[RMDB]
RNA sequence: GGGAACGACUCGAGUAGAGUCGAAAAUUUGGCGUUCCAUUCAGAUAGUUCAAAGAUGACAGGGAUUGGCUUUUCAUUUUUAGUAUCUUGCUUUGCUUGAAGGAGUAAAUCGUUGGCUAGAACCAACGGUGCGUACGAUUUUCGAAUCGUACGCACCAAAAGAAACAACAACAACAAC
Reactivity to DMS in 0.01 (KOAc 150mM, MgCl2 10mM, bicine 150mM(pH8.5), 24C), signal-to-noise 1, nucleotides 027 to 126: u010u010u000g010g000c030g040u020u000c030c000a110u020u000c120a070g000a080u010a020g040u010u010c150a040a110a100g000a070u000g000a060c100a050g020g000g000a090u000u000g020g010c040u010u000u000u000c030a040u000u000u000u050u000a080g000u000a040u010c040u000u010g000c090u020u000u010g020c010u000u000g020a120a050g010g010a120g000u030a050a020a030u000c030g040u010u000g010g030c030u000a030g020a130a230c010c030a030a030c080